[RMDB]
RNA sequence: GGGAACGACUCGAGUAGAGUCGAAAAACGUCGGUGAAGCUGCUGGCCGAGGCCUGGUCGUCAGCAUCUACCAGGAGCACCUUGCGCCUCUGCUGUAGCAGGAACACCACAAGGUUAGUGGCUAUCGACCUGUACUUCUCUUCGGAGAAGUACAGGUAAAAGAAACAACAACAACAAC
Reactivity to 2A3 in 0.01 (KOAc 150mM, MgCl2 10mM, bicine 150mM(pH8.5), 24C), signal-to-noise 2, nucleotides 027 to 126: a000c070g050u060c060g000g000u040g050a080a030g040c000u030g000c010u050g030g030c000c000g040a020g010g010c010c000u020g050g000u140c070g110u060c090a010g040c040a170u020c010u060a090c040c020a010g000g030a010g010c020a050c030c050u050u100g060c110g020c040c000u040c010u030g000c010u040g040u150a020g010c010a010g000g040a040a020c040a020c050c000a030c020a020a020g070g020u080u080a040g010u050g090g010c040u030a060u110c050g010
Reactivity to DMS in 0.01 (KOAc 150mM, MgCl2 10mM, bicine 150mM(pH8.5), 24C), signal-to-noise 3, nucleotides 027 to 126: a090c190g010u000c090g030g030u010g020a080a140g010c000u000g010c020u000g020g010c000c060g000a090g020g020c040c030u000g010g010u000c120g020u000c130a080g020c130a100u010c040u000a040c050c090a040g010g020a150g010c110a210c050c040u000u000g010c090g010c020c020u000c020u000g010c050u000g000u000a060g020c010a020g010g010a060a190c060a140c080c020a040c090a110a060g000g010u000u000a050g030u000g000g030c020u000a090u000c100g010